[RMDB]
RNA sequence: GGGAACGACUCGAGUAGAGUCGAAAACGCACGGGAUAGGAGUAAGACCAUAGCGAUAGGGAGAGAUGCUAGGAGUUAGAGGAGACCGAAGCGAGGAGGAAAGCAAAGAAAGCAACGGGGCUAGCCGCUAUAAUGUGAAGUUCGCUUCACAUUAUAGAAAAGAAACAACAACAACAAC
Reactivity to DMS in 0.01 (KOAc 150mM, MgCl2 10mM, bicine 150mM(pH8.5), 24C), signal-to-noise 6, nucleotides 027 to 126: c120g000c090a060c100g000g000g000a070u000a090g010g020a100g010u010a070a090g010a090c050c020a110u000a070g010c080g010a090u010a060g000g000g010a070g000a080g010a060u010g000c070u000a070g010g000a060g020u000u000a060g010a100g020g010a150g010a070c070c040g010a070a080g010c100g010a070g010g010a080g010g000a060a050a100g010c070a040a060a090g000a070a050a090g000c040a050a080c110g000g000g010g010c080u000a060g010c050c060g020
Reactivity to 2A3 in 0.01 (KOAc 150mM, MgCl2 10mM, bicine 150mM(pH8.5), 24C), signal-to-noise 5, nucleotides 027 to 126: c030g000c020a020c040g020g010g010a030u060a080g050g030a040g040u060a080a000g030a030c010c000a050u050a020g020c030g060a060u090a070g020g020g010a030g000a010g000a020u090g030c010u020a030g040g030a040g010u030u040a040g020a020g050g020a030g020a010c010c030g010a040a000g040c030g020a020g030g010a010g010g020a080a020a000g020c030a040a030a060g040a050a080a010g030c010a000a040c050g010g000g000g020c010u030a010g030c010c010g000
Structure probing data (DMS and 2A3) for a 177-nucleotide construct.
Reactivities are given for positions 27 through 126.
The data come from the RNA Mapping Database (RMDB), library 15KREP.
The DMS profile rests on 7,151 reads.
The reactions ran in a buffer of 150 mM KOAc, 10 mM MgCl2 and 150 mM bicine (pH 8.5), at 24 C.